[RMDB]
RNA sequence: GGGAACGACUCGAGUAGAGUCGAAAAAUCCCUAUUCGUAGGGAUAUGUCCUAAGUCUCAAGGAGGGAGAUUGUCAGUCCGGCUCGGAAACGAGCCCGGACUUGGAUUUAUCUCCUACCCACCCUUGAGAUAUGGAAGUGGCGGUAUUCGUACCGCCCUGUCAGUCAAGUUUCGACUUGACUGACAGAAAAGAAACAACAACAACAAC
Reactivity to 2A3 in 0.01 (KOAc 150mM, MgCl2 10mM, bicine 150mM(pH8.5), 24C), signal-to-noise 1, nucleotides 027 to 156: a010u000c010c000c020u010a040u020u110c300g030u030a010g010g000g000a000u000a110u180g070u000c010c000u040a190a050g010u010c000u000c010a030a000g020g000a010g020g020g000a000g000a000u010u030g010u000c000a010g000u000c000c000g000g030c000u000c000g000g060a070a020a070c020g000a000g030c130c010c000g010g010a000c000u010u030g010g000a000u040u150u200a010u020c000u020c000c000u030a040c000c020c020a070c010c000c000u030u010g000a020g000a020u050a050u030g060g000a140a070g050u110g030g000c010g000g020u020a040u120u210c220g040u070a030c000c000g020c000c000
Reactivity to DMS in 0.01 (KOAc 150mM, MgCl2 10mM, bicine 150mM(pH8.5), 24C), signal-to-noise 1, nucleotides 027 to 156: a100u000c010c000c000u000a030u010u010c190g020u000a000g010g010g010a050u010a050u000g000u010c030c010u000a040a230g030u000c010u000c000a020a030g000g000a250g010g030g000a020g000a030u000u000g000u000c080a030g040u010c010c000g020g000c010u000c010g030g000a090a060a300c010g010a000g000c060c000c010g000g000a000c000u000u010g010g010a040u000u000u000a040u000c040u000c000c020u000a020c050c010c060a300c160c000c000u000u020g010a100g050a020u000a090u010g030g020a210a120g000u010g020g000c000g010g000u010a050u010u000c300g000u010a040c000c000g020c010c000